[RMDB]
RNA sequence: GGGAACGACUCGAGUAGAGUCGAAAAUUCGCGGGUGGGCAGCGCCUUGGCCCGCGCCUCGCGCUGGAACGCGGUGCCCGACUACCUUACGCGGGCGAACGACGAAAUCUGCUUGCUGGUGCAGGUCCAACAGUGGGCAUUUCGAUGCCCACUGUUGAAAAGAAACAACAACAACAAC
Reactivity to 2A3 in 0.01 (KOAc 150mM, MgCl2 10mM, bicine 150mM(pH8.5), 24C), signal-to-noise 2, nucleotides 027 to 126: u060u010c030g000c020g030g030g000u090g010g020g000c050a160g110c030g030c070c050u080u090g160g000c000c000c000g000c020g010c010c000u040c080g010c020g020c020u060g000g040a080a050c020g000c000g040g010u050g000c000c000c000g060a100c020u220a140c030c030u120u160a070c110g000c010g020g010g000c020g000a080a050c040g100a030c020g040a060a040a110u030c020u020g010c010u020u080g070c030u060g010g000u060g030c040a020g000g010u000c010
Reactivity to DMS in 0.01 (KOAc 150mM, MgCl2 10mM, bicine 150mM(pH8.5), 24C), signal-to-noise 3, nucleotides 027 to 126: u000u000c020g000c030g000g020g040u000g010g020g020c020a100g010c100g010c070c050u000u010g040g010c010c020c080g030c040g000c020c030u000c180g010c060g020c030u010g020g000a070a100c130g010c060g010g000u000g000c020c010c020g000a080c090u010a120c130c100u000u010a130c210g030c040g000g000g020c020g010a070a100c080g000a140c090g000a090a080a080u010c020u000g000c030u000u010g000c050u000g000g000u000g000c030a040g000g000u000c100